Structure probing data (DMS and 2A3) for a 207-nucleotide construct. For DMS, 2,387 sequencing reads were counted. Source: RMDB library M2RFPK, as collected in RNAgym. Conditions: 150 mM KOAc, 10 mM MgCl2 and 150 mM bicine (pH 8.5), 24 C. Reactivities are rounded to 0.1 and cut off at 0 and 3. For 2A3, 801 sequencing reads were counted. Values cover nucleotides 27 to 156.
RNA sequence: GGGAACGACUCGAGUAGAGUCGAAAAGCACUAGAGGGCGUAGCGGCUGGGUGUAACCCAACUCUAGGUGUGCUGAUUAGCGGGCUUGACUCCGUAACAAAUAGGCACUGGUGGUAAAAAGCAUCCCUGACCAUAUACAUCUUCGGAUGUAUAUGAAUCCUUAGGUUACGUUCGCGUAACCUAAGGAAAAAGAAACAACAACAACAAC
Reactivity to DMS in 0.01 (KOAc 150mM, MgCl2 10mM, bicine 150mM(pH8.5), 24C), signal-to-noise 1, nucleotides 027 to 156: g010c010a090c010u010a170g010a140g010g000g000c050g050u000a090g030c090g000g000c000u010g000g000g000u000g020u010a050a300c000c010c000a000a040c000u010c030u010a100g010g020u020g020u010g030c000u020g000a160u000u020a140g010c020g000g000g030c060u000u000g000a140c120u010c010c020g020u000a040a160c110a050a070a090u000a100g000g000c000a030c030u010g000g030u010g000g000u000a020a120a040a070a100g000c050a110u010c010c010c010u010g010a240c260c010a020u000a000u000a010c000a000u000c010u000u020c300g010g000a040u000g010u000a000u000a010u000g000a010a140
Reactivity to 2A3 in 0.01 (KOAc 150mM, MgCl2 10mM, bicine 150mM(pH8.5), 24C), signal-to-noise 1, nucleotides 027 to 156: g000c000a000c030u000a010g000a010g030g050g000c000g050u070a030g050c080g080g000c060u040g000g020g000u060g030u030a060a080c020c000c000a010a010c010u000c020u050a030g120g000u030g050u020g040c000u020g000a080u060u030a020g000c020g000g070g070c020u120u190g020a070c080u020c050c000g000u030a040a010c010a020a070a020u130a120g040g000c020a000c070u090g020g020u050g030g010u120a070a000a070a000a000g030c020a040u040c000c000c000u030g060a020c000c000a000u010a000u000a000c010a010u010c020u080u050c140g080g000a000u000g020u000a000u000a000u000g010a000a070